[RMDB]
RNA sequence: GGGAACGACUCGAGUAGAGUCGAAAAACCAACUCGGCUGGAUUCCAAGCUGGUUGCCUGUCCUACGCUCAGCGCAACAACCGCAGACAUGCGACGGCCCCCGCCGGGACGCCAAUCCCAGUGCGAGCUGUAAGUUGAAUUUCGAUUCAACUUACAGAAAAGAAACAACAACAACAAC
Reactivity to 2A3 in 0.01 (KOAc 150mM, MgCl2 10mM, bicine 150mM(pH8.5), 24C), signal-to-noise 9, nucleotides 027 to 126: a000c010c000a020a030c020u020c020g020g000c010u030g010g030a120u170u050c040c010a060a020g010c020u070g090g000u030u050g010c000c010u050g020u060c010c030u060a080c070g020c030u070c040a040g010c010g000c080a030a090c020a060a060c090c020g010c020a020g030a120c030a080u090g010c040g020a020c010g050g000c000c020c000c000c000g000c000c000g000g000g010a030c020g030c020c010a030a070u040c010c010c000a020g030u090g150c020g020a020g020
Reactivity to DMS in 0.01 (KOAc 150mM, MgCl2 10mM, bicine 150mM(pH8.5), 24C), signal-to-noise 9, nucleotides 027 to 126: a110c050c010a080a160c040u010c030g010g010c060u000g000g000a100u020u020c040c030a120a090g010c040u000g010g000u000u010g010c040c020u010g010u010c040c040u000a080c120g020c070u010c050a060g010c060g020c080a090a080c140a070a090c150c020g020c030a060g010a090c200a080u010g000c050g010a160c090g000g000c010c060c020c040c060g020c020c060g000g000g010a060c090g010c070c100a050a140u010c030c010c010a050g010u010g000c030g000a080g010

The record gives the reactivity of an RNA of 177 nucleotides to 2A3 and DMS. Values are in units of 0.01, from 0 to 300, in steps of 10. The RNA was probed in 150 mM KOAc, 10 mM MgCl2 and 150 mM bicine (pH 8.5) at 24 C.